[RMDB]
RNA sequence: GGGAACGACUCGAGUAGAGUCGAAAAGAUAUGGAGGCUGCAGCGCAGGGUUUAGUCGGAAACGAUGUUGACCCUGAACUACGCUGACAGCCUCCUAAGUCAAAACGGUGAAGUUCGCUUCACCGAACCGGUAACUAUACUUCGGUAUAGUUACCGGAAAAGAAACAACAACAACAAC
Reactivity to 2A3 in 0.01 (KOAc 150mM, MgCl2 10mM, bicine 150mM(pH8.5), 24C), signal-to-noise 1, nucleotides 027 to 126: g030a000u080a010u160g010g000a000g010g000c010u000g000c020a000g010c020g030c000a000g080g000g030u010u090u300a060g030u000c000g000g070a030a060a060c010g000a010u080g130u190u180g040a020c000c000c000u000g000a010a000c020u070a000c000g000c000u000g000a020c000a000g000c000c000u000c000c000u000a010a000g010u000c000a000a000a050a080c040g030g030u010g010a000a000g020u070u190c230g060c110u000u000c000a000c000c000g010a010a020
Reactivity to DMS in 0.01 (KOAc 150mM, MgCl2 10mM, bicine 150mM(pH8.5), 24C), signal-to-noise 3, nucleotides 027 to 126: g000a030u000a300u000g000g000a020g010g010c010u000g010c000a020g010c010g000c020a020g000g020g020u000u000u010a110g020u000c000g000g010a170a060a130c010g000a000u000g000u010u010g000a020c010c000c000u010g000a050a030c140u010a300c040g030c000u000g000a100c010a010g000c000c010u000c000c000u000a000a050g000u000c030a080a090a080a140c010g010g000u000g010a020a000g020u000u000c220g000c010u000u000c000a000c000c000g000a020a030

Chemical mapping of a 177-nucleotide RNA with 2A3 and DMS. The DMS profile rests on 2,759 reads. For 2A3 the reverse transcriptase was SuperScript II with manganese.